The record gives the reactivity of an RNA of 177 nucleotides to 2A3 and DMS. It was measured as part of the RMDB library TTRDES.
RNA sequence: GGGAACGACUCGAGUAGAGUCGAAAAGAUAUGGACGCAGUAACUCGCGAUAAGCUCCCAUCGGAAACGAUGGAGAGCUUUUGACGCGAUACUGCGUCCUAAGUCAAAGCGGGUCUUCGGACCCGCACUAGCUAGGUAGGUUCGCCUACCUAGCUAGAAAAGAAACAACAACAACAAC
Reactivity to 2A3 in 0.01 (KOAc 150mM, MgCl2 10mM, bicine 150mM(pH8.5), 24C), signal-to-noise 2, nucleotides 027 to 126: g010a000u020a020u080g000g000a000c010g000c010a000g010u020a160a230c190u010c030g020c120g210a120u100a300a000g000c010u020c010c010c000a010u000c000g000g000a070a000a020c040g000a010u010g050g000a140g000a000g030c030u020u000u000u020g020a010c070g000c010g000a000u020a000c000u010g000c020g020u010c000c000u020a000a010g010u000c010a000a020a070g000c010g000g000g000u010c030u120u130c300g120g020a010c000c000c000g000c000a000
Reactivity to DMS in 0.01 (KOAc 150mM, MgCl2 10mM, bicine 150mM(pH8.5), 24C), signal-to-noise 3, nucleotides 027 to 126: g000a040u000a270u030g010g000a010c000g010c010a020g000u000a040a140c300u010c010g030c000g050a180u000a000a040g000c000u000c000c000c000a020u000c010g000g000a040a030a120c000g000a010u000g010g020a070g000a010g010c000u000u000u010u010g020a170c120g000c000g010a050u000a010c000u000g010c010g000u010c000c000u000a000a080g000u000c030a070a120a080g020c010g010g010g000u000c000u000u020c240g030g000a010c000c000c000g020c010a010
DMS adducts were read by reverse transcription with MarathonRT.